Annotation: Chemical mapping of a 207-nucleotide RNA with 2A3.
[RMDB]
RNA sequence: GGGAACGACUCGAGUAGAGUCGAAAAAGACGGAAACCCAUCGACUGUCACCAGAUGCUGCAUCACCUGAUUACUGAUGGCUCAACGGUAUCCGGCGGUACAACUGAAUACUUGUAGCUGCCUUUUGAAAAGGAGUUCAUCUUCGGAUGAACUCCAACUCAGAUCUUAGCUUCGGCUAAGAUCUGAGAAAAGAAACAACAACAACAAC
Reactivity to 2A3 in 0.01 (KOAc 150mM, MgCl2 10mM, bicine 150mM(pH8.5), 24C), signal-to-noise 2, nucleotides 027 to 156: a000g070a000c080g040g030a070a100a080c040c000c010a050u070c070g070a050c070u030g040u050c010a000c070c010a020g050a040u100g020c040u050g010c020a040u070c000a020c010c000u060g030a130u040u140a070c030u080g040a060u040g050g000c030u030c070a070a060c030g030g010u040a070u030c020c030g010g000c020g000g000u010a010c040a040a010c040u150g110a170a100u080a190c020u030u020g010u040a010g090c020u020g030c010c000u070u170u110u150g100a120a110a020a030g000g000a000g020u000u000c000a010u000c000u020u030c190g090g010a000u000g000a000a000c000u000c000c000a010a000
The RNA was probed in 150 mM KOAc, 10 mM MgCl2 and 150 mM bicine (pH 8.5) at 24 C.